[RMDB]
RNA sequence: GGGAACGACUCGAGUAGAGUCGAAAAGAAUGUCGUUUCCAACGGAGUACCUGACUGAACAAAAAAGCUCAUUCCGUCCGAAACCGGCCAACUCAGAGUGCCCAGCUGUUCGUAUAGUGAGCUCAAAGAGCUCACUAGUAUUCGUACUAGUGAGCUCAAAAGAAACAACAACAACAAC
Reactivity to 2A3 in 0.01 (KOAc 150mM, MgCl2 10mM, bicine 150mM(pH8.5), 24C), signal-to-noise 6, nucleotides 027 to 126: g140a050a090u240g000u010c010g000u000u010u000c000c000a020a000c050g060g020a040g020u050a070c020c010u020g080a070c020u070g030a130a050c110a110a150a030a050a020a010g010c010u020c020a030u080u000c060c020g020u010c030c000g060a070a030a030c040c010g030g020c020c010a050a040c080u050c100a050g050a020g130u080g030c020c010c000a010g010c040u070g010u090u030c020g000u050a030u020a110g090u070g030a010g000c020u040c070a090a130a030
Reactivity to DMS in 0.01 (KOAc 150mM, MgCl2 10mM, bicine 150mM(pH8.5), 24C), signal-to-noise 9, nucleotides 027 to 126: g010a130a090u010g010u000c010g020u000u000u000c000c010a160a160c130g000g010a060g010u000a050c080c040u010g000a100c070u010g000a080a080c110a010a060a070a100a080a070g010c030u000c030a060u000u000c080c040g000u000c090c090g010a040a060a080c120c110g000g010c060c050a070a070c070u000c080a080g010a140g010u000g010c020c010c030a110g010c080u000g010u000u000c070g010u010a080u010a080g020u000g000a060g010c030u000c090a060a090a130
The record gives the reactivity of an RNA of 177 nucleotides to 2A3 and DMS.
The RNA was probed in 150 mM KOAc, 10 mM MgCl2 and 150 mM bicine (pH 8.5) at 24 C.
The DMS profile rests on 17,865 reads.
It was measured as part of the RMDB library OK2TRN.
DMS (dimethyl sulfate) methylates the pairing face of unpaired adenines and cytosines.